[RMDB]
Source information:
Chemical mapping of a 207-nucleotide RNA with DMS and 2A3. 2A3 adducts were read by reverse transcription with SuperScript II with manganese. The 2A3 profile rests on 1,225 reads.
RNA sequence: GGGAACGACUCGAGUAGAGUCGAAAAUAAUUAAAGAUUACAUGGAUAACCGAGCUAAUUGUUGGGCUAAUACAUGCUUAAAAUUCCGUGUCCUGCGACCGGAACGUAUUUAUUAGAUAUUAGACCAAUCGCAGCAAUGUGAUUGAGAUGAAUCAAACAGAGUAAUUCAGUUCGCUGAAUUACUCUGAAAAGAAACAACAACAACAAC
Reactivity to DMS in 0.01 (KOAc 150mM, MgCl2 10mM, bicine 150mM(pH8.5), 24C), signal-to-noise 3, nucleotides 027 to 156: u000a050a090u010u010a080a140a160g010a180u000u000a050c030a080u000g010g020a180u000a080a110c020c020g000a060g030c040u000a030a090u000u000g020u000u000g020g000g020c030u000a020a060u000a030c060a060u010g030c050u000u000a020a110a090a050u000u000c000c000g050u000g020u000c010c050u010g010c290g020a030c010c020g000g010a000a020c050g020u000a060u000u000u000a120u010u010a130g030a140u010a040u000u010a080g010a110c040c010a010a030u000c050g000c030a040g000c240a080a130u010g020u020g000a020u010u010g010a150g010a120u000g010a030a160u020c050a060a110a300
Reactivity to 2A3 in 0.01 (KOAc 150mM, MgCl2 10mM, bicine 150mM(pH8.5), 24C), signal-to-noise 2, nucleotides 027 to 156: u120a010a020u070u100a130a010a120g060a060u120u130a040c030a090u110g040g060a080u070a110a060c030c140g030a050g020c030u070a050a140u100u050g010u010u020g020g010g000c010u000a000a000u010a040c010a010u010g020c020u090u140a020a060a120a110u120u010c010c000g050u060g000u280c050c070u160g130c250g080a020c000c000g010g000a020a000c010g060u060a060u010u070u000a050u030u010a000g040a070u030a060u180u030a020g020a020c000c000a010a000u000c000g000c020a020g020c000a000a080u000g000u010g010a000u000u040g020a030g030a050u070g070a040a100u080c050a000a010a020